[RMDB]
An RNA of 207 nucleotides, treated with 2A3 and read out base by base. For 2A3 the reverse transcriptase was SuperScript II with manganese. The reactions ran in a buffer of 150 mM KOAc, 10 mM MgCl2 and 150 mM bicine (pH 8.5), at 24 C.
RNA sequence: GGGAACGACUCGAGUAGAGUCGAAAAGGUGGCUUCGGCCACCAAAAAGCGUACUACUUGAAUCAACGAAGAACUCAAUCUACCCACCCAGUCCCAAAUAGGACUGGAGGAUUGAGGGAGUUGUGGCAAGUAUCGCAAAAACCGCCUUCGGGCGGAACCUUAUGCCAGUCUUCGGACUGGCAUAAGGAAAAGAAACAACAACAACAAC
Reactivity to 2A3 in 0.01 (KOAc 150mM, MgCl2 10mM, bicine 150mM(pH8.5), 24C), signal-to-noise 1, nucleotides 027 to 156: g020g000u010g000g000c000u000u090c170g090g020c000c000a000c000c000a000a000a000a000a000g030c000g020u110a050c040u020a020c000u010u060g040a030a020u030c030a020a050c300g080a300a020g000a000a000c000u000c000a000a000u100c020u010a100c070c020c000a000c010c000c000a000g000u000c000c000c000a050a150a130u300a060g010g000a000c000u060g000g000a000g000g000a000u000u000g000a000g010g000g000a010g030u000u100g010u190g070g020c030a060a000g000u030a040u300c000g000c000a180a010a000a000a000c030c030g080c010c010u030u000c080g200g000g030c000g000g000a010a000